[RMDB]
RNA sequence: GGGAACGACUCGAGUAGAGUCGAAAACAAAGAUUCACUCUCCUCCUCCAAAACGGCUAGUAUCAGCCUCAGACAAAAUGCUGCCUGAGAUUGUCAUGAAAGCACCUUCUCUGCCUGGAUUCCGAGAAACAAACUGUCAUUUCGAUGACAGUUUGUUAAAAGAAACAACAACAACAAC
Reactivity to 2A3 in 0.01 (KOAc 150mM, MgCl2 10mM, bicine 150mM(pH8.5), 24C), signal-to-noise 2, nucleotides 027 to 126: c020a010a100a010g070a180u100u140c020a040c080u030c000u000c010c000u010c000c000u010c010c000a070a030a000a030c030g010g030c020u050a030g050u050a120u100c010a020g030c020c000u010c000a010g030a020c010a010a130a030a050u080g040c030u010g010c000c000u030g020a040g010a130u040u060g020u040c030a040u100g070a100a020a000g050c000a020c010c020u060u030c020u000c000u010g030c010c000u000g000g010a010u070u000c020c020g050a050g020a080
Reactivity to DMS in 0.01 (KOAc 150mM, MgCl2 10mM, bicine 150mM(pH8.5), 24C), signal-to-noise 4, nucleotides 027 to 126: c140a100a100a110g000a110u010u000c060a100c100u000c020u000c020c010u000c020c010u000c020c030a050a040a110a090c160g010g010c050u000a070g010u000a080u020c060a070g010c030c010u000c060a070g010a020c070a030a070a100a100u000g010c060u000g020c020c020u000g020a080g010a090u000u000g010u000c060a080u010g020a060a090a060g020c050a050c040c010u000u000c020u000c020u000g000c020c030u010g010g000a150u000u000c010c040g000a090g010a110
An RNA of 177 nucleotides, treated with 2A3 and DMS and read out base by base. For 2A3 the reverse transcriptase was SuperScript II with manganese. The data come from the RNA Mapping Database (RMDB), library OK2TST. High 2A3 reactivity points to a flexible backbone, as in loops and unpaired stretches. Values are in units of 0.01, from 0 to 300, in steps of 10. For 2A3, 2,470 sequencing reads were counted.